Chemical mapping of a 177-nucleotide RNA with DMS. Reactivities are given for positions 27 through 126. The RNA was probed in 150 mM KOAc, 10 mM MgCl2 and 150 mM bicine (pH 8.5) at 24 C. For DMS the reverse transcriptase was MarathonRT.

[RMDB]
RNA sequence: GGGAACGACUCGAGUAGAGUCGAAAAUCAGGGAGGAGGGCUCAGGCAGGCAGCAGAGGCCUGGAGGGCCUGGCUCUGUGGGAUCUGUGACCUUCUCCACUCCAGUUGGCAAGGGUCCAGGUGAGUCCCAUCGCACUAGGUUCGCCUAGUGCGAUGGAAAAGAAACAACAACAACAAC
Reactivity to DMS in 0.01 (KOAc 150mM, MgCl2 10mM, bicine 150mM(pH8.5), 24C), signal-to-noise 1, nucleotides 027 to 126: u010c110a070g010g060g000a020g000g000a130g000g000g000c000u000c020a040g010g030c030a050g010g010c070a100g000c170a130g000a090g010g000c010c000u000g000g000a170g030g010g030c000c020u000g010g000c040u000c020u000g020u000g030g010g000a090u000c010u000g000u000g010a050c010c010u000u000c070u000c010c010a040c030u010c050c090a110g000u020u000g030g000c080a150a040g000g010g000u010c010c020a030g000g010u000g010a150g000u010c040